[RMDB]
RNA sequence: GGGAACGACUCGAGUAGAGUCGAAAAUGGGAAUGCAUGGCCAGUGACACAAGUGAGAAUUGGAUGUUAUGACCGUCCAGAAAAGACAAGAUGAGAAAGUGCAGUAUUGACUGUCUUCAAACGCACCGAGAGGUUUGACAUUCGUGUCAAACCUCUCAAAAGAAACAACAACAACAAC
Reactivity to DMS in 0.01 (KOAc 150mM, MgCl2 10mM, bicine 150mM(pH8.5), 24C), signal-to-noise 2, nucleotides 027 to 126: u010g020g010g000a080a070u000g000c050a050u020g050g000c050c010a070g060u040g000a060c070a060c030a050a050g010u000g000a060g020a140a120u040u060g010g000a050u000g000u060u020a090u020g000a040c110c050g000u000c040c010a100g010a030a110a080a060g000a080c140a060a190g000a140u020g010a080g000a050a010a000g000u040g000c050a080g000u000a100u070u020g000a000c080u060g000u000c020u010u000c020a030a050a140c070g000c060a030c160c130
Reactivity to 2A3 in 0.01 (KOAc 150mM, MgCl2 10mM, bicine 150mM(pH8.5), 24C), signal-to-noise 2, nucleotides 027 to 126: u010g030g060g000a070a000u060g000c070a010u060g100g100c000c000a040g000u050g000a020c010a000c000a160a110g030u020g060a100g050a080a240u080u090g000g000a000u000g030u100u140a090u300g060a000c010c000g000u000c020c000a000g070a010a060a000a000g010a000c020a000a020g010a120u030g040a040g070a070a060a060g020u070g050c000a030g040u040a300u150u050g080a080c010u010g000u100c000u000u000c020a040a040a000c000g040c010a030c060c060
Background:
The data come from the RNA Mapping Database (RMDB), libraries RFM100 and RFMREP. This 177-nucleotide RNA was probed chemically with DMS and 2A3. For 2A3, 1,540 sequencing reads were counted. The RNA was probed in 150 mM KOAc, 10 mM MgCl2 and 150 mM bicine (pH 8.5) at 24 C. 2A3 adducts were read by reverse transcription with SuperScript II with manganese.